This 177-nucleotide RNA was probed chemically with DMS and 2A3. The reactions ran in a buffer of 150 mM KOAc, 10 mM MgCl2 and 150 mM bicine (pH 8.5), at 24 C.
RNA sequence: GGGAACGACUCGAGUAGAGUCGAAAAGGGGGGCAUGACCGACCCACCGGGGCGCCGCCUCCGGCGCUCGCAGGCCACGGGUGAAGAAGAAAGUCCGUACCUGCUCGGCCCGGAGUGAGGAGGAGCCGACGCAGUGACAAUUCGUUGUCACUGCGUCAAAAGAAACAACAACAACAAC
Reactivity to DMS in 0.01 (KOAc 150mM, MgCl2 10mM, bicine 150mM(pH8.5), 24C), signal-to-noise 2, nucleotides 027 to 126: g040g030g000g000g020g040c060a080u010g020a170c020c000g000a180c020c010c010a110c050c000g010g040g010g010c000g000c020c000g000c060c010u000c010c030g030g010c300g010c020u000c300g000c000a000g000g010c150c090a020c000g000g000g040u000g000a060a100g000a250a090g000a200a140a180g000u020c000c000g000u010a270c000c000u030g000c050u000c270g020g000c060c000c000g000g020a000g000u020g000a070g000g000a130g000g000a090g000c020c020
Reactivity to 2A3 in 0.01 (KOAc 150mM, MgCl2 10mM, bicine 150mM(pH8.5), 24C), signal-to-noise 3, nucleotides 027 to 126: g030g010g000g000g010g000c080a120u150g070a080c010c040g060a100c000c000c010a010c010c020g030g010g020g000c010g000c000c000g020c020c000u000c000c000g020g000c170g000c020u010c020g000c000a000g010g010c080c080a000c000g000g030g000u030g050a060a090g070a060a020g070a070a180a000g010u000c000c000g000u000a020c000c000u010g010c030u050c090g030g000c000c000c000g010g000a020g010u220g030a030g010g010a020g000g020a020g010c010c030
The DMS profile rests on 2,915 reads. DMS (dimethyl sulfate) methylates the pairing face of unpaired adenines and cytosines. Reactivities are rounded to 0.1 and cut off at 0 and 3. Source: RMDB library RFM100, as collected in RNAgym. 2A3 adducts were read by reverse transcription with SuperScript II with manganese.